[RMDB]
RNA sequence: GGGAACGACUCGAGUAGAGUCGAAAAAGCCAUACCAUUACGAUGGUAUGGCAAGUCCGUGACGGCGAUGGAUCCCGCCUGGCCGAUGCCGAACUGCCGAUCUGGCUGAAGGUUCCUGCCCCGUCAAAAAACGUAAAGCACUUCGGUGCUUUACGAACGAUACAACGUCGUUCGCGACGUUGUAUCGAAAAGAAACAACAACAACAAC
Reactivity to 2A3 in 0.01 (KOAc 150mM, MgCl2 10mM, bicine 150mM(pH8.5), 24C), signal-to-noise 1, nucleotides 027 to 156: a000g020c000c000a000u010a000c000c000a020u030u020a070c300g100a000u000g010g000u010a000u000g000g010c000a000a020g010u000c000c010g000u020g040a020c000g010g060c100g050a040u030g010g000a020u070c020c010c000g000c030c050u020g020g020c000c010g050a040u110g090c040c090g120a220a150c120u140g030c000c020g100a100u030c050u120g000g020c000u020g090a090a000g030g000u000u010c000c000u030g020c010c000c020c020g000u000c000a010a010a010a010a010a010c000g010u000a000a010a000g000c030a040c020u080u100c210g050g000u010g000c000u000u000u000a000c000g010a000a000